[RMDB]
RNA sequence: GGGAACGACUCGAGUAGAGUCGAAAACUUGAAUCUCUAGGUAAGAUUUAGGUGCUGUCAUCCAAGCAUGCCAUCCAUCUAGGACAAUGCUGUCAAUUUCAGAGUGAAUUAUAGAAUGAAUUUUGUCAGCGGAAGUUAUAUUCGUAUAACUUCCGCUAAAAGAAACAACAACAACAAC
Reactivity to 2A3 in 0.01 (KOAc 150mM, MgCl2 10mM, bicine 150mM(pH8.5), 24C), signal-to-noise 2, nucleotides 027 to 126: c010u060u030g010a020a040u030c010u010c060u110a040g140g040u130a060a090g010a040u030u030u130a060g040g000u000g050c020u030g090u120c050a070u000c020c020a020a010g070c050a010u090g000c010c000a000u000c000c000a050u040c050u130a060g010g010a020c010a050a050u070g020c000u000g060u030c030a060a100u030u090u000c040a030g090a110g210u090g150a110a090u200u110a140u150a200g070a070a040u140g060a040a030u190u000u050u050g000u100c050
Reactivity to DMS in 0.01 (KOAc 150mM, MgCl2 10mM, bicine 150mM(pH8.5), 24C), signal-to-noise 3, nucleotides 027 to 126: c020u000u000g010a030a060u000c010u010c040u010a110g000g000u020a110a040g000a030u000u000u000a030g000g010u010g010c070u000g020u000c080a080u020c090c050a160a080g020c050a060u000g000c030c080a070u000c030c040a050u000c090u010a120g010g020a060c080a050a070u000g010c010u010g010u010c080a030a030u000u000u010c050a120g000a130g000u000g010a070a070u000u000a140u000a060g000a110a080u010g010a030a100u010u010u010u010g000u000c120